[RMDB]
RNA sequence: GGGAACGACUCGAGUAGAGUCGAAAAAGGCUCUAUUUCCUGGAAGGUGGGCCUAGCCUACCCCACUUCCCCUCAGCAGAGCCUAGAGUAAAGGGGCCAGGCCUCCUCCCCAAUGGGAGAGAGAUGUCUUUCUUAAAGAGUUCGCUCUUUAAGAAAGAAAAGAAACAACAACAACAAC
Reactivity to 2A3 in 0.01 (KOAc 150mM, MgCl2 10mM, bicine 150mM(pH8.5), 24C), signal-to-noise 2, nucleotides 027 to 126: a000g020g000c000u040c000u030a170u070u140u110c010c010u010g050g010a060a020g060g050u030g000g000g000c000c010u000a010g020c020c010u040a040c000c000c000c020a020c000u090u080c040c000c000c010u120c070a110g020c040a020g020a010g050c010c000u050a050g010a000g070u120a050a070a060g020g000g000g010c000c030a020g000g000c020c000u000c000c000u000c010c020c000c020a090a110u240g020g000g000a040g000a000g020a000g010a010u090g030u040
Reactivity to DMS in 0.01 (KOAc 150mM, MgCl2 10mM, bicine 150mM(pH8.5), 24C), signal-to-noise 2, nucleotides 027 to 126: a070g010g010c000u010c020u000a100u010u010u010c010c040u000g010g020a050a070g020g000u000g010g000g010c080c040u000a100g020c020c010u010a100c190c010c010c030a040c050u000u010c010c000c020c040u010c150a130g000c170a050g000a020g010c030c000u000a050g000a110g000u000a050a080a110g000g010g000g010c070c040a030g000g010c210c000u000c040c000u000c020c000c010c300a090a120u010g030g000g000a030g010a060g000a040g020a140u000g010u000
Source: RMDB library RFMREP, as collected in RNAgym. This 177-nucleotide RNA was probed chemically with 2A3 and DMS. 2A3 adducts were read by reverse transcription with SuperScript II with manganese. Reactivities are given for positions 27 through 126. For DMS, 1,608 sequencing reads were counted. For 2A3, 2,600 sequencing reads were counted.